[RMDB]
RNA sequence: GGGAACGACUCGAGUAGAGUCGAAAAAUUCUAAGUCCUUCACACUUAUCUUUGGUGGCGUAGCUUACGCCUACUUUGGAUGUGAGGAAGGUACUAUGUACUUUGUGCCUAGAGCUAAGUCUGUUGUAGACCGAACAGUUCGCUGUUCGGAAAAGAAACAACAACAACAAC
Reactivity to 2A3 in 0.01 (KOAc 150mM, MgCl2 10mM, bicine 150mM(pH8.5), 24C), signal-to-noise 4, nucleotides 027 to 129: a000u070u030c030u100a050a030g020u000c000c000u000u000c000a010c000a000c060u190u220a050u030c010u000u060u040g010g010u010g000g000c000g000u040a080g140c150u190u060a020c010g000c000c000u170a040c010u000u010u010g010g000a000u000g020u010g020a290g050g000a000a000g000g000u000a000c010u020a000u130g060u030a060c020u080u050u100g130u110g090c010c020u080a080g010a050g150c030u070a060a060g020u020c110u070g030u010u000g020u000a010g030a050
Reactivity to DMS in 0.01 (KOAc 150mM, MgCl2 10mM, bicine 150mM(pH8.5), 24C), signal-to-noise 1, nucleotides 027 to 129: a070u000u000c030u060a150a080g020u020c000c020u020u010c000a090c010a060c040u000u100a020u010c010u010u010u000g010g020u000g010g010c000g000u000a020g020c270u070u010a030c000g020c000c000u040a000c030u000u000u000g030g020a010u040g000u000g000a140g000g000a000a000g000g030u000a030c000u000a090u000g000u030a070c050u000u010u010g000u030g000c030c010u050a040g010a110g020c070u000a060a060g000u000c080u000g040u010u000g030u050a050g050a180